[RMDB]
This 177-nucleotide RNA was probed chemically with DMS and 2A3. The 2A3 profile rests on 1,144 reads. The reactions ran in a buffer of 150 mM KOAc, 10 mM MgCl2 and 150 mM bicine (pH 8.5), at 24 C.

RNA sequence: GGGAACGACUCGAGUAGAGUCGAAAAGAAAAAGAGGCAGAGCCUUUCCUCUCAUACACCCCAUUGUAUUGGGUGGAUUGCUGUGUUAUAGACUGUGGGCAGGUUACUUAGGAUGUCCUCAGAGAAACCGACCAUUAGUAUUCGUACUAAUGGUCGGAAAAGAAACAACAACAACAAC
Reactivity to DMS in 0.01 (KOAc 150mM, MgCl2 10mM, bicine 150mM(pH8.5), 24C), signal-to-noise 2, nucleotides 027 to 126: g000a050a050a000a070a090g050a070g010g010c080a070g020a060g010c020c050u000u010u000c000c000u000c030u020c030a040u020a070c020a010c080c040c020c080a120u030u000g000u000a040u000u050g030g000g000u020g000g010a100u010u000g000c020u010g010u000g000u000u000a080u040a100g000a180c000u000g020u010g000g000g000c030a060g000g000u020u010a040c110u020u070a190g000g010a150u000g070u000c000c010u000c000a030g030a160g000a060a140a100
Reactivity to 2A3 in 0.01 (KOAc 150mM, MgCl2 10mM, bicine 150mM(pH8.5), 24C), signal-to-noise 2, nucleotides 027 to 126: g090a010a070a040a000a010g110a060g140g000c060a020g030a010g060c000c060u000u020u010c000c000u000c000u010c010a010u000a080c020a030c030c080c010c050a110u050u070g040u010a080u040u080g040g020g000u040g030g000a030u040u040g000c000u010g000u010g030u220u050a130u090a120g050a090c010u010g010u000g010g000g000c000a010g060g070u140u040a070c110u120u120a050g160g070a060u010g010u090c020c000u000c000a010g030a010g070a050a100a030